[RMDB]
RNA sequence: GGGAACGACUCGAGUAGAGUCGAAAAUCGCCGACCUUCCUCUCCUCGACUAGGCCUGCGAAGCCUAGGUCCUCCGGGCUUAGGUCCUCGACGUUACUGACGAUCCUCGCGCCAGUAGCGCGAGCAAGUUUUCACUACCAUUCGUGGUAGUGAAAACAAAAGAAACAACAACAACAAC
Reactivity to 2A3 in 0.01 (KOAc 150mM, MgCl2 10mM, bicine 150mM(pH8.5), 24C), signal-to-noise 2, nucleotides 027 to 126: u030c000g000c050c020g040a100c010c020u040u050c010c000u050c000u050c010c000u050c050g010a050c020u040a020g000g050c000c020u070g050c120g060a090a020g010c010c010u000a000g020g000u010c000c020u050c050c080g010g000g030c040u010u020a030g010g030u050c030c040u030c040g150a220c010g030u010u040a040c000u030g060a040c010g010a020u080c030c040u020c060g020c000g010c000c020a090g060u080a020g000c000g000c010g010a000g030c030a130a040
Reactivity to DMS in 0.01 (KOAc 150mM, MgCl2 10mM, bicine 150mM(pH8.5), 24C), signal-to-noise 3, nucleotides 027 to 126: u000c080g030c030c030g020a090c070c040u010u000c040c020u000c020u000c020c030u000c050g020a110c060u000a030g020g020c010c010u010g040c090g010a110a180g000c000c010u000a030g020g000u000c010c020u010c120c110g020g000g000c040u000u010a030g000g000u000c070c020u000c000g000a090c020g020u000u000a050c040u000g000a030c050g010a120u000c090c050u010c070g010c000g010c000c030a060g020u020a100g030c010g000c000g010a020g010c300a060a080
Source: RMDB library OK2TST, as collected in RNAgym. The record gives the reactivity of an RNA of 177 nucleotides to 2A3 and DMS. The DMS profile rests on 2,671 reads. The reactions ran in a buffer of 150 mM KOAc, 10 mM MgCl2 and 150 mM bicine (pH 8.5), at 24 C.